[RMDB]
RNA sequence: GGGAACGACUCGAGUAGAGUCGAAAAUACACUUUACGUGUGCUGGUUUCAUUACUUUGUCCCAAACCAGGCACGCGUAAUUAAAGGCCAGUUUGGCCAGGUCCGCGUUAUCGAUGGACACCAAUAAGAUGGUGAACUUGUUCGCAAGUUCACCAUCAAAAGAAACAACAACAACAAC
Reactivity to DMS in 0.01 (KOAc 150mM, MgCl2 10mM, bicine 150mM(pH8.5), 24C), signal-to-noise 1, nucleotides 027 to 126: u040a080c160a160c090u000u000u000a000c000g050u000g010u020g010c030u000g010g030u000u000u000c110a100u040u020a030c190u010u010u000g100u020c000c030c040a110a020a020c010c010a000g010g000c000a010c000g000c010g000u000a010a000u030u000a050a130a070g020g020c000c000a060g010u000u010u000g030g000c000c020a070g000g000u000c010c020g000c010g010u000u000a120u020c020g020a020u000g010g030a020c010a090c150c110a050a090u010a080a120
Reactivity to 2A3 in 0.01 (KOAc 150mM, MgCl2 10mM, bicine 150mM(pH8.5), 24C), signal-to-noise 2, nucleotides 027 to 126: u070a000c000a000c040u060u030u010a010c000g000u000g000u000g020c000u000g000g020u030u000u030c110a110u110u190a140c100u160u220u220g110u150c030c000c010a020a000a000c010c010a010g170g000c000a000c000g000c020g000u000a000a020u030u110a150a030a000g000g040c000c030a100g110u130u230u080g040g010c000c010a030g120g000u010c020c010g000c000g010u050u110a150u190c030g010a110u070g000g010a020c010a050c030c000a020a070u110a170a030